RNA sequence: GGGAACGACUCGAGUAGAGUCGAAAAUGGGAAAAGUCCCGGAACCAGGAAAUGGGAAAGAGACGGUAGAAAAGAGCGAGCCUCCCAGUUUUCGAGUAGUCCCGGACCUAUCUAAAUUGGAGUCAUCGACACGAGCUCUUCGGAGCUCGUAAAAGAAACAACAACAACAAC
Reactivity to DMS in 0.01 (KOAc 150mM, MgCl2 10mM, bicine 150mM(pH8.5), 24C), signal-to-noise 1, nucleotides 027 to 129: u040g000g000g000a000a110a060a170g000u000c000c040c010g060g030a130a120c150c070a080g000g020a000a000a000u000g050g090g010a030a060a050g030a070g060a100c100g000g000u000a050g010a010a100a050a190g030a110g030c030g050a040g040c030c010u000c000c000c110a080g000u030u000u020u010c090g020a070g000u060a000g000u040c050c010c020g030g000a060c070c000u060a130u040c100u050a020a150a190u020u080g000g010a070g000u010c110a060u000c060g010a080c130
Reactivity to 2A3 in 0.01 (KOAc 150mM, MgCl2 10mM, bicine 150mM(pH8.5), 24C), signal-to-noise 2, nucleotides 027 to 129: u110g030g030g000a020a020a000a050g060u030c000c000c000g020g090a010a010c020c020a020g020g020a000a020a000u070g010g000g000a000a220a000g090a000g000a000c000g060g060u050a070g100a090a150a030a010g040a000g000c070g050a030g000c000c000u050c060c000c000a000g000u000u000u020u000c030g020a000g000u060a010g000u090c060c000c000g000g000a000c000c000u010a010u030c060u070a000a120a180u180u090g040g000a000g000u010c040a030u080c050g090a040c060